[RMDB]
RNA sequence: GGGAACGACUCGAGUAGAGUCGAAAACGAGGAAGAAAUAAAAGGGGGAAAAAAGUUCAGAGAAAAGAUCUGUCUAGUAGGUAGCGUCUACGCUGUAGGCUGUGCAGUUGAAGCUCUAGCGAGUCUCCUCUUAUAUUAGGUUCGCCUAAUAUAAGAGAAAAGAAACAACAACAACAAC
Reactivity to DMS in 0.01 (KOAc 150mM, MgCl2 10mM, bicine 150mM(pH8.5), 24C), signal-to-noise 9, nucleotides 027 to 126: c090g010a090g010g010a080a070g000a080a090a080u010a060a070a100a100g010g000g010g000g020a000a050a070a110a080a070g000u000u000c050a050g010a080g000a060a080a080a090g000a060u000c030u000g010u000c030u000a070g010u010a040g010g010u000a060g010c090g010u000c040u000a050c080g010c080u000g000u000a060g010g010c030u000g020u000g000c050a050g010u000u000g000a120a150g000c010u000c010u000a030g000c020g000a040g010u000c020u000c050
Reactivity to 2A3 in 0.01 (KOAc 150mM, MgCl2 10mM, bicine 150mM(pH8.5), 24C), signal-to-noise 4, nucleotides 027 to 126: c030g010a030g050g020a090a050g020a070a180a080u220a120a160a080a060g010g000g000g020g000a070a080a050a020a000a020g030u050u030c040a020g020a000g050a070a160a040a020g040a040u010c010u030g040u010c020u030a050g040u010a020g080g050u020a020g040c010g020u010c040u040a030c060g000c080u050g030u050a020g080g000c030u040g040u060g050c020a030g000u040u030g030a050a000g010c010u010c000u020a030g030c010g010a010g010u000c010u010c010